[RMDB]
RNA sequence: GGGAACGACUCGAGUAGAGUCGAAAAGAUAUGGAUUUGACUUGACUUGGAUUUAGCACGUACGUGUAAGUAUAUCGGAAACGAUAUACUGAGCGUACGUGCUUGUCAGUCAAGCAAAUCCUAAGUCGCAUGUCAAUAGGUUCGCCUAUUGACAUGCAAAAGAAACAACAACAACAAC
Reactivity to 2A3 in 0.01 (KOAc 150mM, MgCl2 10mM, bicine 150mM(pH8.5), 24C), signal-to-noise 2, nucleotides 027 to 126: g060a010u140a120u280g000g020a030u000u090u030g300a300c000u000u000g020a010c040u170u300g170g020a070u300u300u170a000g000c010a000c010g010u000a010c010g000u030g020u090a000a010g020u000a000u000a000u000c020g090g020a080a050a060c020g040a010u000a020u020a010c000u000g010a030g000c000g010u000a000c000g000u000g000c000u000u010g000u010c000a000g000u010c000a000a020g050c010a000a000a000u000c010c000u010a150a030g100u090c130
Reactivity to DMS in 0.01 (KOAc 150mM, MgCl2 10mM, bicine 150mM(pH8.5), 24C), signal-to-noise 1, nucleotides 027 to 126: g010a020u040a300u010g000g000a020u000u000u010g000a180c000u030u000g020a000c010u000u030g030g000a010u010u010u000a000g040c000a000c000g010u000a000c000g000u000g010u020a300a070g020u000a010u000a000u000c010g030g000a140a110a240c000g000a000u000a000u000a010c010u000g000a300g010c020g000u000a000c010g070u020g000c000u000u000g000u000c010a020g010u010c000a010a010g000c010a000a000a000u000c000c000u000a060a120g000u010c090